[RMDB]
This 207-nucleotide RNA was probed chemically with 2A3. 2A3 is a SHAPE reagent: it acylates the 2'-hydroxyl of flexible nucleotides of all four kinds. 2A3 adducts were read by reverse transcription with SuperScript II with manganese.

RNA sequence: GGGAACGACUCGAGUAGAGUCGAAAAAGCACGGUUUUUGAGGACGCAUUUUGUCCGUGCGGUAACGCCCUCCUUUACACUUUCUCGCAUGGUGCGGGAGUGUGGAGAGGAAACAAAAGCUAGUCUCGAUAGGCGGUUAACUUCGGUUAACCGCCAAGAAACUACCUUACUUCGGUAAGGUAGUUUCAAAAGAAACAACAACAACAAC
Reactivity to 2A3 in 0.01 (KOAc 150mM, MgCl2 10mM, bicine 150mM(pH8.5), 24C), signal-to-noise 2, nucleotides 027 to 156: a000g000c020a000c010g020g000u020u000u000u000u000g120a170g010g010a020c050g050c170a210u010u000u000u000g000u000c050c000g000u000g000c000g030g040u090a050a040c150g060c020c000c020u040c020c000u080u100u060a010c010a000c000u100u180u080c030u050c000g020c070a120u300g240g000u250g150c000g000g010g000a010g000u040g000u000g000g000a040g000a020g000g020a000a060a000c010a000a020a000a000g090c010u090a060g000u010c000u000c040g130a170u160a070g000g000c010g010g000u030u000a020a000c000u040u020c150g000g000u000u000a000a000c040c010g000c010c000a000a010